[RMDB]
RNA sequence: GGGAACGACUCGAGUAGAGUCGAAAAUAGCGAUCUCUAAUGAGAUCGCGAGUCGAAUCCAUCGAAGAGGCUCGACAGAUGGACGACAGCGAGCCCACAGGAGUCGAGGAAAACUCGACUCCAAAAACAGGGCUAUCGGGUUCGCCCGAUAGCCCUGAAAAGAAACAACAACAACAAC
Reactivity to 2A3 in 0.01 (KOAc 150mM, MgCl2 10mM, bicine 150mM(pH8.5), 24C), signal-to-noise 1, nucleotides 027 to 126: u130a060g000c000g000a000u000c000u000c060u120a050a290u300g000a000g000a000u000c000g000c000g000a010g000u000c000g000a070a250u050c000c000a000u000c010g070a300a110g040a060g070g000c030u020c050g040a050c070a090g050a010u000g010g000a000c000g000a000c000a070g170c040g010a000g020c000c040c000a000c020a130g000g000a040g000u000c000g000a000g000g140a010a140a300a250c000u000c000g000a000c000u000c000c000a000a000a000a000a000
Source: RMDB library OK1LIB, as collected in RNAgym. An RNA of 177 nucleotides, treated with 2A3 and read out base by base. For 2A3, 396 sequencing reads were counted. The reactions ran in a buffer of 150 mM KOAc, 10 mM MgCl2 and 150 mM bicine (pH 8.5), at 24 C.